The data come from the RNA Mapping Database (RMDB), library OK2TRN. An RNA of 177 nucleotides, treated with DMS and 2A3 and read out base by base. DMS adducts were read by reverse transcription with MarathonRT. High DMS reactivity at an A or C suggests that its Watson-Crick edge is free. The RNA was probed in 150 mM KOAc, 10 mM MgCl2 and 150 mM bicine (pH 8.5) at 24 C. For DMS, 1,123 sequencing reads were counted. 2A3 adducts were read by reverse transcription with SuperScript II with manganese. For 2A3, 850 sequencing reads were counted.
RNA sequence: GGGAACGACUCGAGUAGAGUCGAAAAGGCGUCUUCGCUGCCUCGGCCGCCAUGCACUGACCGGUAGCCGCCGUAAUCGCGGCAUUGUUCCCAUAAAUGGAUGUGGGUGUGGGUGCCGAAGUAGCAGAUAGGCGUAGCUGUUCGCAGCUACGCCUAUAAAAGAAACAACAACAACAAC
Reactivity to DMS in 0.01 (KOAc 150mM, MgCl2 10mM, bicine 150mM(pH8.5), 24C), signal-to-noise 1, nucleotides 027 to 126: g030g010c070g000u000c080u010u000c150g030c020u010g010c000c020u010c030g000g000c060c000g050c020c010a020u000g010c020a010c060u000g000a150c040c040g000g010u010a080g020c050c010g010c000c060g000u030a080a060u020c300g020c030g000g030c020a150u000u010g000u010u010c000c010c010a090u010a040a030a120u000g020g010a170u010g030u010g010g020g020u000g030u000g020g000g020u040g000c000c020g020a000a060g040u020a060g070c030a110g010
Reactivity to 2A3 in 0.01 (KOAc 150mM, MgCl2 10mM, bicine 150mM(pH8.5), 24C), signal-to-noise 1, nucleotides 027 to 126: g060g010c070g060u010c020u140u100c080g000c020u080g050c000c000u010c000g000g040c040c010g040c010c000a130u150g020c010a000c040u080g110a080c040c010g050g030u100a040g000c010c000g060c020c000g050u090a040a040u220c050g010c000g020g000c000a010u050u090g040u050u020c000c000c000a040u140a000a200a050u170g090g030a030u110g080u170g080g020g010u040g010u040g000g040g070u050g020c020c010g000a010a000g000u040a010g000c040a000g000